[RMDB]
RNA sequence: GGGAACGACUCGAGUAGAGUCGAAAAGAUAUGGAUCGACCCGUGGGAGUGAGGUCGGAAACGACCUACAUCGAUCACGCGAUCCUAAGUCAAAAGUCUACCGUAGACUUCGGUCUACGGUAGACAAGAAAGUAGGAAGGUUCGCCUUCCUACUUUCAAAAGAAACAACAACAACAAC
Reactivity to 2A3 in 0.01 (KOAc 150mM, MgCl2 10mM, bicine 150mM(pH8.5), 24C), signal-to-noise 3, nucleotides 027 to 126: g030a010u070a030u140g010g000a010u010c010g000a220c070c170c080g010u000g020g020g000a110g000u030g010a020g000g010u000c000g040g000a050a070a020c000g000a000c000c010u060a070c000a080u280c030g040a060u090c000a000c010g020c010g010a000u000c010c000u000a120a030g050u040c040a090a040a070a070g020u020c000u010a000c000c010g000u010a000g000a000c000u040u080c300g070g000u000c000u000a010c000g000g000u010a000g000a000c000a000a000
Reactivity to DMS in 0.01 (KOAc 150mM, MgCl2 10mM, bicine 150mM(pH8.5), 24C), signal-to-noise 5, nucleotides 027 to 126: g010a040u000a300u010g010g020a010u000c000g010a130c170c200c110g010u000g010g000g000a300g010u010g000a050g000g010u000c000g010g000a070a080a140c010g010a010c000c010u000a100c030a050u010c020g000a300u020c000a010c030g000c010g010a010u000c000c000u000a020a080g000u020c080a070a090a130a120g000u000c000u000a000c010c000g010u000a000g000a030c000u000u010c190g030g000u000c000u000a000c000g000g000u010a000g000a000c000a010a030